[RMDB]
RNA sequence: GGGAACGACUCGAGUAGAGUCGAAAAGGAGGCAAGUUCGCUUGCCUCCAAAGAAGCUCAAAUUGACGCAAACAUCCGCGUCAUCGCGAGCAACCGAGGAAAAAACCGUGAACUUCGGUUCACGGAAGAUAGCAACAGAGUUCGCUCUGUUGCUAUCAAAAGAAACAACAACAACAAC
Reactivity to DMS in 0.01 (KOAc 150mM, MgCl2 10mM, bicine 150mM(pH8.5), 24C), signal-to-noise 3, nucleotides 027 to 126: g020g010a010g020g020c000a000a010g000u000u010c230g010c000u000u000g000c000c000u000c010c000a010a030a060g020a090a150g000c000u000c010a040a260a040u000u000g010a010c020g010c000a070a120a140c230a150u010c250c180g010c000g000u000c000a000u000c130g010c300g000a000g040c010a030a100c010c000g000a150g020g000a000a050a070a050a120a090c000c000g010u000g000a000a000c000u010u000c150g020g000u000u000c000a010c010g000g020a010a020
Reactivity to 2A3 in 0.01 (KOAc 150mM, MgCl2 10mM, bicine 150mM(pH8.5), 24C), signal-to-noise 2, nucleotides 027 to 126: g040g000a010g020g000c000a000a000g020u030u020c050g000c060u010u000g000c000c020u020c000c000a000a000a000g000a040a020g020c000u000c000a100a070a200u060u030g020a010c020g000c010a030a300a250c070a300u190c190c130g000c000g010u000c010a000u030c030g010c030g000a010g000c000a000a010c030c010g050a110g070g000a090a190a010a000a000a030c010c010g010u000g000a000a000c010u060u060c270g060g000u000u000c000a000c000g000g020a000a000

Structure probing data (DMS and 2A3) for a 177-nucleotide construct. Source: RMDB library M2PK50, as collected in RNAgym. 2A3 is a SHAPE reagent: it acylates the 2'-hydroxyl of flexible nucleotides of all four kinds.